[RMDB]
RNA sequence: GGGAACGACUCGAGUAGAGUCGAAAAUGCCAGUGUAGAGUGAGUUUGGUCAAGAGGAAGGAGAGUCAUACUGGUUUAUGUUUAGCUCAAAGUUGCCCCUCUUCUUACAAGUAUCCAGGAUGGUGGGCCGAGUAGCCUAGUUCGCUAGGCUACUCGGAAAAGAAACAACAACAACAAC
Reactivity to DMS in 0.01 (KOAc 150mM, MgCl2 10mM, bicine 150mM(pH8.5), 24C), signal-to-noise 1, nucleotides 027 to 126: u000g000c040c000a040g010u000g040u010a110g010a170g040u010g000a040g010u000u010u010g010g020u000c070a050a130g010a080g000g000a080a060g010g020a050g000a080g020u010c080a080u000a090c050u040g000g010u000u010u010a030u010g010u000u000u010a090g020c070u030c070a070a070a060g010u010u010g010c040c000c010c020u000c030u020u000c040u000u000a040c080a040a100g020u000a070u000c030c050a090g000g000a050u050g030g030u000g020g000g010